RNA sequence: GGGAACGACUCGAGUAGAGUCGAAAAGAAGAAAGGAUUUUGAACAUCCACAAUGCAAAGAGAUGAAAAAUAUUUGAAGUGAUGGAUAUGCAAAUUACCCUUAUUUGAUCAUUGCUUAUAGUAUAUAGUAAUCGCCAUAAUUCGUUAUGGCGAUUACAAAAGAAACAACAACAACAAC
Reactivity to 2A3 in 0.01 (KOAc 150mM, MgCl2 10mM, bicine 150mM(pH8.5), 24C), signal-to-noise 1, nucleotides 027 to 126: g120a030a010g030a030a080a000g000g020a020u030u050u160u170g060a030a000c010a010u000c010c050a020c070a000a100u160g130c020a000a110a000g080a040g020a020u120g120a120a060a030a090a000u110a070u030u000u120g040a060a020g000u010g020a080u020g010g010a030u010a070u230g080c010a000a000a020u040u120a090c000c000c000u040u020a050u010u030u000g020a030u060c010a070u090u110g000c000u110u120a090u110a260g010u020a050u060a040u040a250
Reactivity to DMS in 0.01 (KOAc 150mM, MgCl2 10mM, bicine 150mM(pH8.5), 24C), signal-to-noise 1, nucleotides 027 to 126: g020a060a070g030a130a180a050g000g010a070u010u000u010u000g010a090a150c160a050u000c000c000a000c030a080a050u020g000c060a000a020a020g000a120g000a140u020g000a070a100a110a080a090u010a120u000u000u000g010a050a030g050u000g020a160u010g000g000a050u010a100u000g010c050a000a020a010u000u000a100c100c000c040u010u000a150u010u000u000g000a100u000c030a090u010u020g000c060u030u000a090u000a100g010u000a100u010a060u000a080